[RMDB]
RNA sequence: GGGAACGACUCGAGUAGAGUCGAAAAGCAGCUACACCCUAUGCGAAUAGGGCUUUCUUACUAUUCGUCACUAAGAAAGCCUUCAGUGAAGGUAUGAAGGCUUGAUCGUACCUCGUAGGGUGUAGAAGAUACGACAGAGAUUCGUUUCUGUUGUAUCAAAAGAAACAACAACAACAAC
Reactivity to DMS in 0.01 (KOAc 150mM, MgCl2 10mM, bicine 150mM(pH8.5), 24C), signal-to-noise 9, nucleotides 027 to 126: g010c110a120g000c000u000a000c000a000c000c000c000u000a010u010g010c080g000a110a080u030a040g010g000g000c030u000u010u000c010u000u000a040c110u030a130u020u020c090g000u020c080a070c170u000a030a020g010a050a030a030g010c030c000u000u000c100a080g010u020g010a090a020g010g020u000a010u000g000a020a080g000g010c100u010u010g000a080u000c010g010u000a020c010c010u000c020g020u000a000g000g000g010u000g000u000a000g000a040a070
Reactivity to 2A3 in 0.01 (KOAc 150mM, MgCl2 10mM, bicine 150mM(pH8.5), 24C), signal-to-noise 9, nucleotides 027 to 126: g070c040a010g030c000u000a000c000a000c000c000c000u010a010u030g060c070g070a080a080u110a160g010g010g000c000u020u030u010c000u010u040a070c050u050a140u110u100c060g110u070c070a020c060u010a010a000g020a030a030a000g040c000c000u020u020c020a030g020u050g180a110a010g010g000u020a010u020g030a060a030g210g010c090u070u110g040a040u030c000g000u010a010c000c010u020c010g000u000a000g000g000g000u000g000u000a000g000a000a000